[RMDB]
RNA sequence: GGGAACGACUCGAGUAGAGUCGAAAAGUGUAGCCUUUCAGUAUGCUAUUCUGUGGACUGAAUUUACAAAUUGUCAUUUGUUUAAUGAACUGUUAAUAUAACAUGAUGACUAACUGAAAACACAUACAAUUUGCUGGUAUUCCAGAAGUCUAUGGAAAGCACCAUACUACUUCGGUAGUAUGGUGCUAAAAGAAACAACAACAACAAC
Reactivity to 2A3 in 0.01 (KOAc 150mM, MgCl2 10mM, bicine 150mM(pH8.5), 24C), signal-to-noise 1, nucleotides 027 to 156: g080u050g000u000a030g020c000c000u030u080u040c150a130g160u190a150u220g020c040u030a030u010u000c000u000g050u030g000g000a010c000u080g000a100a030u100u290u300a060c030a030a010a010u050u000g000u000c030a050u010u040u100g000u000u020u010a080a030u070g040a040a070c030u000g020u040u030a200a020u190a030u000a230a060c070a130u130g090a070u140g060a100c020u020a140a000c000u010g030a090a000a000a000c020a000c000a010u050a010c000a000a010u020u010u010g000c060u040g010g010u150a280u180u220c020c000a010g020a010a000g000u010c000u050a000u040g030g020a040a050
The record gives the reactivity of an RNA of 207 nucleotides to 2A3. The 2A3 profile rests on 447 reads. The reactions ran in a buffer of 150 mM KOAc, 10 mM MgCl2 and 150 mM bicine (pH 8.5), at 24 C. Values are in units of 0.01, from 0 to 300, in steps of 10.